Description
An RNA of 177 nucleotides, treated with 2A3 and DMS and read out base by base.
[RMDB]
RNA sequence: GGGAACGACUCGAGUAGAGUCGAAAAAAAGGCUUAUCAAGAGAGGUGGAGGGACUGGCCCGAUGAAACCCGGCAGCCAGAAAUGGUGCCAAUUCCUGCAGCGGAAACGCUGAAAGAUGAGCCGAAACGAUAAUGUAUCGUUCGCGAUACAUUAUCGAAAAGAAACAACAACAACAAC
Reactivity to 2A3 in 0.01 (KOAc 150mM, MgCl2 10mM, bicine 150mM(pH8.5), 24C), signal-to-noise 2, nucleotides 027 to 126: a000a000a040g020g000c010u010u010a010u020c120a180a000g010a000g000a090g030g020u010g000g010a030g020g000g000a000c010u000g050g030c000c000c000g110a210u020g000a010a010a000c000c020c000g000g000c010a050g160c000c000a000g020a000a030a020u020g000g020u010g010c010c000a000a010u030u010c000c000u060g060c010a000g010c000g010g010a030a010a010c010g000c000u010g010a000a000a000g000a000u000g000a000g000c020c010g010a030a020a000
Reactivity to DMS in 0.01 (KOAc 150mM, MgCl2 10mM, bicine 150mM(pH8.5), 24C), signal-to-noise 2, nucleotides 027 to 126: a050a020a090g010g010c000u000u000a010u010c010a100a100g000a040g020a160g000g000u000g020g000a030g020g000g000a240c170u000g000g000c020c020c010g000a060u000g010a110a140a030c010c020c020g000g010c030a040g020c000c010a010g010a050a070a080u000g000g020u000g010c000c020a010a070u000u000c010c010u000g010c030a020g010c000g000g000a110a050a130c010g020c000u000g000a020a040a070g000a020u000g010a000g000c010c010g020a030a080a130
Conditions: 150 mM KOAc, 10 mM MgCl2 and 150 mM bicine (pH 8.5), 24 C. Source: RMDB library 15KREP, as collected in RNAgym.